[RMDB]
RNA sequence: GGGAACGACUCGAGUAGAGUCGAAAAUCGGGUUCUGGCAAUGGCCCUCGGAUAAAGCCGGAACCUUUUUUGGCCGACCUUCGCCGGUCGGCGCACUUUCUAUGCGCAAACGCGCCGCACGCGGCGAGGCGUGGUAUUUAUUCGUAAAUACCACGCCAAAAGAAACAACAACAACAAC
Reactivity to 2A3 in 0.01 (KOAc 150mM, MgCl2 10mM, bicine 150mM(pH8.5), 24C), signal-to-noise 2, nucleotides 027 to 126: u130c030g010g020g000u020u020c010u030g010g000c030a090a210u080g080g020c040c070c080u020c110g110g010a040u060a230a110a020g010c000c000g010g010a000a000c010c000u080u090u030u020u090u040g030g030c040c030g060a190c020c030u090u070c020g000c010c000g010g000u000c000g010g030c010g030c000a020c030u130u280u180c060u090a110u300g100c080g000c060a100a020a090c030g000c000g000c000c020g000c030a030c030g300c030g020g040c000g000a030
Reactivity to DMS in 0.01 (KOAc 150mM, MgCl2 10mM, bicine 150mM(pH8.5), 24C), signal-to-noise 2, nucleotides 027 to 126: u010c130g020g020g000u000u010c000u010g000g010c020a130a180u000g010g000c030c000c060u000c110g010g000a130u000a070a100a280g010c010c000g000g000a010a010c000c000u010u000u000u000u000u000g010g030c120c080g000a180c060c020u000u000c040g000c050c050g010g000u000c010g010g000c010g010c010a060c120u000u000u010c100u000a120u020g030c110g000c130a040a080a080c130g030c000g010c010c050g010c180a030c080g020c000g020g020c000g010a020

The data come from the RNA Mapping Database (RMDB), library OK2TST. The record gives the reactivity of an RNA of 177 nucleotides to 2A3 and DMS. 2A3 adducts were read by reverse transcription with SuperScript II with manganese. Reactivities are given for positions 27 through 126. For 2A3, 1,338 sequencing reads were counted.